[RMDB]
RNA sequence: GGGAACGACUCGAGUAGAGUCGAAAACCAACAGCCAUGACCUACCAGGCUGCGGUGCGGCUCGCCGCACAGGUCAUCCCUCAUCGGGCGCGUCCUGCGUCCUUCCACGCCAACCCACAAGGGAUCUAAAACACGUUGGGCUUCGGCCCAACGUGAACCAUACUAACCCCUUCGGGGGUUAGUAUGGAAAAGAAACAACAACAACAAC
Reactivity to 2A3 in 0.01 (KOAc 150mM, MgCl2 10mM, bicine 150mM(pH8.5), 24C), signal-to-noise 1, nucleotides 027 to 156: c010c000a010a050c010a010g020c000c020a110u070g020a110c030c030u120a130c090c050a010g010g020c050u050g100c090g060g000u020g000c000g060g000c080u050c110g090c000c000g000c000a000c000a020g000g050u030c000a070u030c000c010c000u020c060a130u200c040g020g000g000c010g000c000g090u260c040c130u150g000c010g000u020c010c010u000u030c020c030a070c050g050c040c020a000a020c030c010c000a140c070a140a110g050g010g000a010u050c030u150a030a070a070a040c040a000c000g000u000u000g000g000g000c020u020u030c100g060g000c010c050c000a000a000c000g000u000g000a000a010

Source: RMDB library M2RFPK, as collected in RNAgym. The record gives the reactivity of an RNA of 207 nucleotides to 2A3. For 2A3, 833 sequencing reads were counted.